[RMDB]
RNA sequence: GGGAACGACUCGAGUAGAGUCGAAAAACUCCGGAUGGAUGUGGUGUUGUAGGACCCUGCCUAAUGCCGUGGAACGAAGCCGAAGUGGUCUGGAACGGCCCGCCGUAGAGGGUGAUAGCCCCGUAGGCCACACUCUGUUAUUCGUAACAGAGUGUGGAAAAGAAACAACAACAACAAC
Reactivity to DMS in 0.01 (KOAc 150mM, MgCl2 10mM, bicine 150mM(pH8.5), 24C), signal-to-noise 6, nucleotides 027 to 126: a070c060u010c020c010g000g010a060u010g010g010a080u000g020u010g010g010u010g010u010u010g020u010a090g010g010a120c040c020c020u020g010c020c040u010a090a070u030g010c020c020g000u020g020g000a070a100c130g000a100a130g010c010c000g000a010a010g010u030g010g000u000c000u000g000g020a300a060c020g000g000c000c010c000g040c000c000g030u000a020g010a300g000g000g010u000g010a100u040a060g000c000c000c000c000g000u000a300g000g000
Reactivity to 2A3 in 0.01 (KOAc 150mM, MgCl2 10mM, bicine 150mM(pH8.5), 24C), signal-to-noise 4, nucleotides 027 to 126: a000c050u040c010c010g040g020a080u100g020g030a030u050g090u080g090g040u040g000u090u050g040u040a060g010g070a040c010c000c010u020g020c010c010u110a130a020u110g010c000c000g030u060g020g030a100a050c090g030a060a010g010c010c010g010a020a000g070u120g040g000u000c000u000g010g000a000a010c000g000g000c010c000c000g020c010c000g000u020a010g000a040g020g000g000u030g020a030u010a030g000c000c000c000c010g000u000a000g000g000
The data come from the RNA Mapping Database (RMDB), libraries RFM100 and RFMREP.
Structure probing data (DMS and 2A3) for a 177-nucleotide construct.
Values cover nucleotides 27 to 126.
The reactions ran in a buffer of 150 mM KOAc, 10 mM MgCl2 and 150 mM bicine (pH 8.5), at 24 C.
For 2A3 the reverse transcriptase was SuperScript II with manganese.
DMS adducts were read by reverse transcription with MarathonRT.